RNA sequence: GGGAACGACUCGAGUAGAGUCGAAAACGUGUCCGUCGGCGUAGCCGACAACAUGCCCAGGUAGCCCUGACCUUCAAGGCUACGGUGCGUUGCGACGCACGGUCUGAUUCUUCACAACGACGUUCACAAGAUCGGAUCACUUUCGAGUGAUCCGAAAACAAAAACACUGAUUCGUCAGUGUUUUUGUAAAAGAAACAACAACAACAAC
Reactivity to 2A3 in 0.01 (KOAc 150mM, MgCl2 10mM, bicine 150mM(pH8.5), 24C), signal-to-noise 5, nucleotides 027 to 156: c030g020u020g020u040c090c060g030u000c010g040g000c190g130u190a070g030c010c000g030a010c000a010a010c020a010u120g030c000c000c030a020g040g010u020a020g000c030c050c180u100g020a040c010c020u050u060c030a020a010g000g000c000u000a000c010g000g000u010g000c010g000u010u080g040c130g090a010c000g010c000a010c020g010g000u010c050u030g030a050u060u070c060u120u150c090a060c030a220a090c100g130a010c060g090u080u090c100a020c030a230a040g040a170u030c010g010g000a000u000c000a000c000u040u110u170c230g050a010g010u010g010a010u010c000c010g000a000a000a000
Reactivity to DMS in 0.01 (KOAc 150mM, MgCl2 10mM, bicine 150mM(pH8.5), 24C), signal-to-noise 2, nucleotides 027 to 156: c050g020u000g010u000c040c100g020u000c000g040g000c010g030u000a110g030c010c000g010a080c010a050a030c020a070u010g000c010c000c060a150g030g000u000a030g010c030c010c110u000g010a120c130c090u000u000c040a020a130g010g020c000u000a030c020g030g020u000g020c050g010u000u000g020c100g010a230c010g000c020a080c000g010g000u000c030u010g020a150u000u000c080u000u000c080a110c040a090a110c060g030a060c020g020u000u000c030a110c050a060a150g020a140u000c010g010g010a020u010c000a000c000u000u000u020c300g020a060g080u000g000a020u000c010c000g000a000a000a080